[RMDB]
RNA sequence: GGGAACGACUCGAGUAGAGUCGAAAAAGACAGACAGUGCACACUGCAGACGGUGCUCACUGCAAGUCACCAGUGAGACAUGUGGUCGCUUGCACAUGUCACCGUCAAGUCACCAGUGUGCAGUGUUGUCGCAUGAACACUGCACUGUCAAGCGACACGUAUCUAGCUAGUUCGCUAGCUAGAUACGAAAAGAAACAACAACAACAAC
Reactivity to DMS in 0.01 (KOAc 150mM, MgCl2 10mM, bicine 150mM(pH8.5), 24C), signal-to-noise 3, nucleotides 027 to 156: a110g020a140c070a130g030a080c010a070g000u000g000c040a040c020a070c020u000g000c030a250g000a030c040g020g020u000g010c100u000c030a060c050u000g010c020a060a120g000u000c110a080c080c010a060g000u010g000a220g000a140c080a120u000g020u000g010g020u000c050g010c040u010u010g070c000a030c080a050u000g020u000c010a040c020c000g000u000c030a090a170g010u000c050a170c110c010a060g040u010g010u000g010c000a020g000u000g010u000u000g020u010c030g010c070a110u010g010a070a100c050a070c030u000g020c040a080c030u000g000u000c010a090a110g020c030g010a070c040a210
Reactivity to 2A3 in 0.01 (KOAc 150mM, MgCl2 10mM, bicine 150mM(pH8.5), 24C), signal-to-noise 8, nucleotides 027 to 156: a000g050a020c060a010g060a010c010a020g120u000g010c020a000c000a000c010u030g010c050a040g000a000c010g000g000u010g000c020u000c020a040c010u010g000c010a010a020g060u090c030a010c020c000a030g050u070g130a150g060a080c090a120u270g030u040g080g010u030c040g000c000u010u000g000c010a040c010a030u090g000u030c000a000c000c000g000u010c030a060a010g100u080c050a020c070c010a000g010u000g000u000g000c000a000g000u000g000u010u040g010u020c020g000c020a060u100g050a080a010c050a010c070u130g010c080a050c120u040g020u050c030a050a030g030c010g020a010c000a000